[RMDB]
RNA sequence: GGGAACGACUCGAGUAGAGUCGAAAAUGACUUAAGUGAAUCCACAACAUGGGAAAGAUUCAAAUAUUACAUUGAUAGCUUCCAUCUCAAAAUUGAUCUCAUAGUACUGGAUAUGGAAGUCAGGGACGAGGAACCUACAAUUCGUUGUAGGUUCCUCAAAAGAAACAACAACAACAAC
Reactivity to 2A3 in 0.01 (KOAc 150mM, MgCl2 10mM, bicine 150mM(pH8.5), 24C), signal-to-noise 4, nucleotides 027 to 126: u080g000a000c040u110u100a060a030g100u080g140a030a050u010c000c040a070c040a100a120c000a060u060g000g030g000a040a020a000g020a000u030u030c070a000a120a060u200a120u180u170a080c160a170u120u220g130a150u070a140g110c100u150u070c010c080a020u040c110u030c100a020a210a060a090u020u080g040a090u010c030u010c020a030u040a080g020u030a020c110u030g000g000a010u020a060u060g030g050a030a000g010u010c000a010g080g100g110a070c090
Reactivity to DMS in 0.01 (KOAc 150mM, MgCl2 10mM, bicine 150mM(pH8.5), 24C), signal-to-noise 3, nucleotides 027 to 126: u000g000a000c020u000u030a070a090g000u020g050a070a020u000c000c000a040c100a060a110c060a000u010g000g010g000a030a080a300g010a020u020u050c080a010a100a080u030a130u010u040a110c070a100u050u000g020a070u000a140g000c070u000u020c100c040a080u000c020u000c160a050a070a050a040u010u020g000a300u000c000u010c010a000u000a140g030u000a160c300u010g010g000a020u000a050u050g000g020a020a070g010u010c020a030g010g000g000a160c120